This 177-nucleotide RNA was probed chemically with DMS and 2A3. For 2A3 the reverse transcriptase was SuperScript II with manganese.

RNA sequence: GGGAACGACUCGAGUAGAGUCGAAAAAAGCUCAUCUUUGGAACUGGCACUCUGCUUGCUGUCCAGCCAAGUACGUAAGUAGUGGCAUGUGUCAGGUGGAUUCUGUGUCCAUGGCAAGUAGGAAGCGACAAUGUUGUGAAUUCGUUCACAACAUUGUAAAAGAAACAACAACAACAAC
Reactivity to DMS in 0.01 (KOAc 150mM, MgCl2 10mM, bicine 150mM(pH8.5), 24C), signal-to-noise 9, nucleotides 027 to 126: a060a070g010c050u000c060a110u010c070u000u000u000g010g010a100a090c060u010g000g010c020a120c060u000c030u000g000c010u000u000g010c020u000g010u000c020c020a070g000c020c020a030a050g010u000a010c020g000u010a120a110g010u000a020g020u000g010g000c020a080u000g010u010g020u000c020a050g020g020u000g000g010a040u000u010c180u010g010u010g010u000c010c010a030u000g000g000c020a020a020g020u000a040g010g010a090a160g010c090g000
Reactivity to 2A3 in 0.01 (KOAc 150mM, MgCl2 10mM, bicine 150mM(pH8.5), 24C), signal-to-noise 8, nucleotides 027 to 126: a000a000g100c090u100c080a140u030c080u110u100u110g080g020a070a060c040u040g070g000c020a010c060u080c010u020g010c010u000u020g000c020u030g030u010c000c010a020g010c020c000a070a060g220u020a010c030g050u080a030a160g000u020a020g040u030g050g000c060a130u060g150u030g030u040c030a060g140g000u020g010g010a030u180u060c130u210g190u080g010u050c010c000a000u020g020g000c010a010a010g000u020a030g030g070a070a010g030c010g020
The reactions ran in a buffer of 150 mM KOAc, 10 mM MgCl2 and 150 mM bicine (pH 8.5), at 24 C. DMS adducts were read by reverse transcription with MarathonRT. Values are in units of 0.01, from 0 to 300, in steps of 10.